The record gives the reactivity of an RNA of 170 nucleotides to 2A3 and DMS. Values cover nucleotides 27 to 129. The 2A3 profile rests on 38,904 reads. The reactions ran in a buffer of 150 mM KOAc, 10 mM MgCl2 and 150 mM bicine (pH 8.5), at 24 C. For 2A3 the reverse transcriptase was SuperScript II with manganese.
RNA sequence: GGGAACGACUCGAGUAGAGUCGAAAAGUGUGCUUCAAAUAAACUUCGCGUUGUAAUUCCUGACUUCACCGUCUGGAAUCAGGUAGUCACAUAUCCCUCGCUUAACUACGCUGGGGCUUUGUGGGACAAGGAUGCUAGUUCGCUAGCAUCAAAAGAAACAACAACAACAAC
Reactivity to 2A3 in 0.01 (KOAc 150mM, MgCl2 10mM, bicine 150mM(pH8.5), 24C), signal-to-noise 9, nucleotides 027 to 129: g060u050g010u020g070c040u090u150c070a050a110a190u240a090a130a050c040u100u070c080g010c050g100u030u070g050u080a050a050u040u020c000c000u020g000a010c020u070u060c090a040c100c060g040u040c030u060g010g020a010a010u040c010a010g070g030u080a040g080u070c010a000c000a020u040a030u040c000c010c000u010c020g010c010u110u130a210a090c080u110a050c150g010c010u030g000g010g000g000c000u040u030u030g010u000g010g030g040a010c030a050a060g110
Reactivity to DMS in 0.01 (KOAc 150mM, MgCl2 10mM, bicine 150mM(pH8.5), 24C), signal-to-noise 9, nucleotides 027 to 129: g000u030g030u020g030c050u000u020c110a060a120a130u020a040a070a050c060u010u020c060g000c200g020u000u040g020u020a070a050u020u020c000c000u010g020a000c030u010u040c260a080c230c190g020u020c040u010g020g030a020a010u020c120a030g010g030u000a030g000u000c040a020c020a000u000a050u000c000c000c020u040c300g000c040u030u060a040a030c160u040a090c160g000c040u010g000g030g010g000c100u010u020u010g020u010g000g020g030a030c080a100a090g010